[RMDB]
RNA sequence: GGGAACGACUCGAGUAGAGUCGAAAAGAUAUGGACUCGCGAUAAGCUGGUAUCGGAAACGAUACCCAGCUUUUGACGCGAUGUCCUAAGUCAAACUAACCCUGACCCUUCGGGGUCAGGGUUAGAAGAGGGUGUAUAAGUUCGCUUAUACACCCUCAAAAGAAACAACAACAACAAC
Reactivity to 2A3 in 0.01 (KOAc 150mM, MgCl2 10mM, bicine 150mM(pH8.5), 24C), signal-to-noise 2, nucleotides 027 to 126: g000a010u040a040u090g000g010a000c000u000c010g000c000g040a070u070a230a060g000c000u000g030g000u000a010u020c000g040g000a090a020a010c020g000a000u010a020c010c030c020a000g030c000u070u030u040u070g100a030c030g000c020g000a010u220g000u000c000c000u010a130a000g020u020c030a050a060a090c010u000a010a010c010c000c000u010g000a000c030c020c000u040u090c300g120g000g000g000u010c020a010g000g000g000u000u010a000g000a010a010
Reactivity to DMS in 0.01 (KOAc 150mM, MgCl2 10mM, bicine 150mM(pH8.5), 24C), signal-to-noise 3, nucleotides 027 to 126: g000a050u000a300u010g000g010a010c010u000c000g020c000g020a150u000a020a010g000c010u000g000g020u000a000u010c000g010g010a080a100a120c010g000a010u000a010c170c030c040a010g000c000u000u000u000u010g020a170c050g000c000g000a010u010g010u000c000c000u000a020a060g010u000c010a100a130a280c000u000a010a000c000c010c000u000g000a020c000c000c000u000u020c160g010g010g020g000u000c010a000g000g000g000u010u000a000g000a040a110
Notes: Source: RMDB library TTRDEL, as collected in RNAgym. Chemical mapping of a 177-nucleotide RNA with 2A3 and DMS. The 2A3 profile rests on 4,073 reads. The DMS profile rests on 3,172 reads. For 2A3 the reverse transcriptase was SuperScript II with manganese. The reactions ran in a buffer of 150 mM KOAc, 10 mM MgCl2 and 150 mM bicine (pH 8.5), at 24 C.